RNA sequence: GGGAACGACUCGAGUAGAGUCGAAAACGUUAAGUAUCGAAGAUAGGGUUGUCAUAGGCGCUAGGAUGCGUACAAGAAACUUGGACGGCGGCCCCGGAGCCUAUACCGUCCUCUACACGCCCCCUGAGGGGCGUUGAUGUUUCGACAUCAACGCCCCAAAAGAAACAACAACAACAAC
Reactivity to DMS in 0.01 (KOAc 150mM, MgCl2 10mM, bicine 150mM(pH8.5), 24C), signal-to-noise 2, nucleotides 027 to 126: c080g030u000u010a040a180g020u000a030u000c070g000a060a060g010a130u000a070g000g010g000u020u010g010u000c090a070u000a140g020g000c040g010c040u010a080g000g000a080u000g000c030g010u020a050c080a070a070g010a080a060a080c080u010u000g010g000a010c020g030g060c160g000g020c040c030c090c130g000g000a080g000c020c000u010a070u000a120c000c000g000u000c010c000u010c080u010a070c080a040c050g020c030c010c000c030c030u010g010a190
Structure probing data (DMS) for a 177-nucleotide construct. The DMS profile rests on 1,507 reads. The data come from the RNA Mapping Database (RMDB), library OK2TST.